[RMDB]
RNA sequence: GGGAACGACUCGAGUAGAGUCGAAAACGAUUGCACCUCGGAGCCGAAAAUCGGCGUGGCACUGCCAUCGCCCCAACCGAACAGGUUGCUGCCGUCAAAUCCGACUGCGGUUUUGUGCUGGUGCGAGCCAGGGGAAGUCUUUCGAGACUUCCCCUGGAAAAGAAACAACAACAACAAC
Reactivity to 2A3 in 0.01 (KOAc 150mM, MgCl2 10mM, bicine 150mM(pH8.5), 24C), signal-to-noise 2, nucleotides 027 to 126: c010g060a050u030u090g000c000a010c010c020u040c080g070g060a020g000c000c010g060a100a070a000a110u080c020g010g010c070g000u010g010g000c070a080c300u170g000c020c010a040u060c100g030c020c000c010c020a010a010c010c000g050a110a050c040a150g000g000u020u020g010c060u020g000c020c020g010u060c030a080a090a220u050c030c060g010a030c030u050g020c010g030g000u030u030u040u040g090u060g050c110u070g010g000u000g000c000g010a010g020
Reactivity to DMS in 0.01 (KOAc 150mM, MgCl2 10mM, bicine 150mM(pH8.5), 24C), signal-to-noise 3, nucleotides 027 to 126: c050g000a120u000u010g010c010a050c030c060u010c050g010g020a090g020c010c010g000a060a030a080a090u000c050g000g010c110g040u010g010g010c020a110c190u000g010c020c020a050u020c030g000c050c030c110c020a000a020c060c010g010a080a120c230a150g000g000u000u000g010c080u000g020c030c050g000u000c060a100a080a150u000c140c060g000a040c060u000g020c020g010g000u000u000u000u000g020u000g020c080u000g000g030u000g020c020g010a080g000